Description:
The record gives the reactivity of an RNA of 177 nucleotides to 2A3 and DMS. The RNA was probed in 150 mM KOAc, 10 mM MgCl2 and 150 mM bicine (pH 8.5) at 24 C. Reactivities are given for positions 27 through 126.
RNA sequence: GGGAACGACUCGAGUAGAGUCGAAAAGUGGGGCCUAGAUCAGGUAGACAGGGAGGAACAUCAUUUUAAGAGCACAGUGGACACUCAGUGCUAUGGUCUGGGUAAGUGCCCUGGAAAGACCUGUGUGCGCAUAUUACUCCUUCGGGAGUAAUAUGCGAAAAGAAACAACAACAACAAC
Reactivity to 2A3 in 0.01 (KOAc 150mM, MgCl2 10mM, bicine 150mM(pH8.5), 24C), signal-to-noise 1, nucleotides 027 to 126: g060u020g000g020g050g070c010c020u080a060g020a100u090c040a010g010g030u020a000g030a060c030a000g040g000g000a040g050g000a040a020c050a130u130c040a060u120u040u210u300a100a040g020a010g000c000a000c010a120g010u050g170g040a040c020a000c090u020c030a080g030u040g010c010u030a090u160g010g000u030c010u030g040g000g020u010a080a000g060u040g150c020c000c000u000g090g080a080a060a020g040a040c000c060u030g030u000g080u110g040
Reactivity to DMS in 0.01 (KOAc 150mM, MgCl2 10mM, bicine 150mM(pH8.5), 24C), signal-to-noise 2, nucleotides 027 to 126: g030u000g000g030g010g000c060c000u010a030g000a130u010c110a020g000g020u000a080g000a150c050a060g000g020g000a060g000g000a100a090c080a100u020c050a090u030u000u000u010a080a130g000a090g020c010a010c030a070g000u020g020g010a120c150a030c050u010c090a080g000u000g040c020u000a070u010g020g010u000c000u000g030g000g000u000a080a080g010u000g000c010c010c000u030g000g000a070a050a130g020a060c050c010u020g010u000g010u020g050
DMS adducts were read by reverse transcription with MarathonRT. Source: RMDB library OK2TRN, as collected in RNAgym.